Conditions: 150 mM KOAc, 10 mM MgCl2 and 150 mM bicine (pH 8.5), 24 C. Structure probing data (DMS and 2A3) for a 207-nucleotide construct. It was measured as part of the RMDB library OK3TST. DMS adducts were read by reverse transcription with MarathonRT. Reactivities are given for positions 27 through 156. The DMS profile rests on 3,078 reads.

RNA sequence: GGGAACGACUCGAGUAGAGUCGAAAAGCUGAUAUGUGUGUCUGUCUUCUCUGUGAGGGUACGAGUGUCAGUGAGGAUGCCAUCACUGAUCAUCUCUGUUUCCGUGUCUAAUACAUCUUCAACACUGGUUCUGGAACUGCUCACAUGUGGAUGUAGACCAUUACGUGACGUUCGCGUCACGUAAUGGAAAAGAAACAACAACAACAAC
Reactivity to DMS in 0.01 (KOAc 150mM, MgCl2 10mM, bicine 150mM(pH8.5), 24C), signal-to-noise 2, nucleotides 027 to 156: g010c030u010g030a110u000a100u000g010u010g040u000g000u000c050u020g000u000c010u000u010c020u010c040u000g020u000g020a140g010g020g000u010a080c110g000a050g070u000g020u000c000a010g010u000g010a090g050g030a200u000g020c120c080a300u010c010a030c010u010g020a050u000c050a120u010c020u010c010u000g030u000u000u000c010c010g000u000g000u010c040u010a100a190u000a050c030a030u000c030u000u000c050a050a070c020a080c050u000g020g030u020u010c080u020g000g000a060a100c070u010g020c040u000c020a080c090a070u010g010u000g020g000a040u010g030u000a100g000a150
Reactivity to 2A3 in 0.01 (KOAc 150mM, MgCl2 10mM, bicine 150mM(pH8.5), 24C), signal-to-noise 4, nucleotides 027 to 156: g050c050u040g060a030u090a130u140g110u020g000u000g040u050c060u060g060u020c050u110u020c020u020c030u040g060u030g030a030g030g040g000u070a060c050g000a040g000u010g020u000c020a000g010u010g020a010g100g030a160u140g100c050c010a090u060c000a010c000u010g020a030u080c050a120u040c020u010c050u070g040u020u050u010c010c000g020u030g000u000c110u090a070a050u080a150c050a080u000c020u090u050c020a070a060c050a020c040u070g010g040u080u060c020u060g090g050a070a050c030u060g040c010u060c020a020c010a070u100g020u020g050g030a030u030g000u030a010g050a060